[RMDB]
RNA sequence: GGGAACGACUCGAGUAGAGUCGAAAAGUACCGGCGUGCCUGUAAUCCGUACGGGUUGUGGGAGCAAGAGCCCGGAGAUGGAUUCUGAGACACGAAUCCAGGCCCUACGGGGCGCAGCAGGCGCGAACACUUACUGGGCGUUCGCGCCCAGUAAGUGAAAAGAAACAACAACAACAAC
Reactivity to DMS in 0.01 (KOAc 150mM, MgCl2 10mM, bicine 150mM(pH8.5), 24C), signal-to-noise 1, nucleotides 027 to 126: g000u020a140c000c020g000g010c030g000u000g030c000c030u000g000u030a100a110u010c020c000g000u010a050c200g000g020g030u000u000g020u020g000g050g040a080g000c170a290a200g000a180g010c010c000c000g010g050a150g000a130u000g000g010a020u020u000c000u000g000a220g010a120c150a160c090g000a000a010u020c000c000a120g000g030c000c110c000u000a060c070g000g000g000g010c130g000c070a130g010c000a000g000g000c000g010c000g000a040a080
Reactivity to 2A3 in 0.01 (KOAc 150mM, MgCl2 10mM, bicine 150mM(pH8.5), 24C), signal-to-noise 3, nucleotides 027 to 126: g020u060a020c010c000g020g010c010g020u000g000c000c000u010g030u060a030a070u010c000c000g030u030a050c160g000g050g010u050u060g080u240g030g020g000a040g060c130a200a060g030a070g140c010c000c020g140g040a150g040a080u060g000g000a000u000u020c010u010g050a010g020a090c060a030c200g000a020a000u000c010c000a000g000g020c000c010c010u000a000c020g000g000g040g000c200g000c030a040g000c020a010g000g000c020g000c000g010a070a000